The record gives the reactivity of an RNA of 207 nucleotides to 2A3. For 2A3, 376 sequencing reads were counted. Conditions: 150 mM KOAc, 10 mM MgCl2 and 150 mM bicine (pH 8.5), 24 C.

RNA sequence: GGGAACGACUCGAGUAGAGUCGAAAACGAGUGGUUUGGGUGUCUGGGGGGUUUCGCUUCUUCAAGAAUAAGGUUAAUUGGGUUUAUAGUUAUGUAAUGUUAGGAUCUAUAAUAUGGAAUGAGCGAGGCUCACACACCUGUAGUCCCAGCUACUCCAAAUUAGUGCCUACUUCGGUAGGCACUAAUUAAAAGAAACAACAACAACAAC
Reactivity to 2A3 in 0.01 (KOAc 150mM, MgCl2 10mM, bicine 150mM(pH8.5), 24C), signal-to-noise 1, nucleotides 027 to 156: c030g000a040g000u000g050g030u190u200u050g060g040g000u130g010u110c150u160g060g000g000g000g000g110u010u020u000c000g000c000u040u030c010u000u000c070a050a000g070a100a100u290a160a000g200g020u050u140a010a070u230u150g060g000g030u020u130u040a160u020a040g090u000u100a090u180g040u060a120a060u120g040u160u090a000g030g130a000u000c000u000a020u070a120a110u130a140u120g050g000a000a020u050g000a000g050c020g000a000g010g000c000u000c000a070c000a010c000a000c060c010u030g020u060a020g010u000c000c020c000a000g000c010u010a000c000u020c000c030a050